Description
The record gives the reactivity of an RNA of 207 nucleotides to 2A3 and DMS. The 2A3 profile rests on 13,960 reads. The reactions ran in a buffer of 150 mM KOAc, 10 mM MgCl2 and 150 mM bicine (pH 8.5), at 24 C. In probing experiments dimethyl sulfate is read out at A N1 and C N3, which are open when not base-paired.
RNA sequence: GGGAACGACUCGAGUAGAGUCGAAAAUAGCAAGCGAUAUCGUUGCUGACUGGACAACGAAAGUUAGAACCGCCAACAACAUUGGCAAAUCUCGCAAGCAGAUCGAUGAAAUAAUCGAAGGUCGAUACGCUAUCUAUGGUAGUUGGUCGCGCAACCGCAAUACGGAUGUUUUCGAACAUCCGUAUUGAAAAGAAACAACAACAACAAC
Reactivity to 2A3 in 0.01 (KOAc 150mM, MgCl2 10mM, bicine 150mM(pH8.5), 24C), signal-to-noise 9, nucleotides 027 to 156: u140a010g030c050a100a010g010c010g050a060u020a020u090c020g010u020u030g020c020u010g030a080c080u120g010g040a040c010a040a010c040g030a080a050a020g050u090u090a050g020a100a040c060c040g000c010c010a010a020c030a030a030c020a090u010u020g010g000c000a000a050a100u070c070u010c020g020c040a060a020g010c010a020g030a070u020c020g010a010u030g080a050a070a110u190a080a110u120c060g010a040a020g080g030u070c010g000a020u050a080c020g000c020u010a030u090c040u050a070u130g090g010u010a070g020u030u110g040g000u030c020g000c000g000c080a030a030c030c020g010
Reactivity to DMS in 0.01 (KOAc 150mM, MgCl2 10mM, bicine 150mM(pH8.5), 24C), signal-to-noise 7, nucleotides 027 to 156: u000a090g010c060a090a210g020c020g020a080u000a090u000c020g030u000u000g000c000u010g020a110c050u000g050g020a200c050a050a060c040g020a080a070a150g000u000u010a100g020a090a140c070c100g010c000c000a010a040c040a050a060c020a300u000u000g000g030c020a070a060a050u000c040u000c030g030c060a110a120g020c090a080g020a100u010c010g010a030u000g000a060a090a130u000a070a100u000c050g010a090a090g040g020u000c010g030a080u000a040c060g010c010u000a070u000c010u000a070u010g020g020u010a030g010u000u000g020g010u000c060g020c090g020c050a050a090c010c030g010
For DMS the reverse transcriptase was MarathonRT.
For 2A3 the reverse transcriptase was SuperScript II with manganese.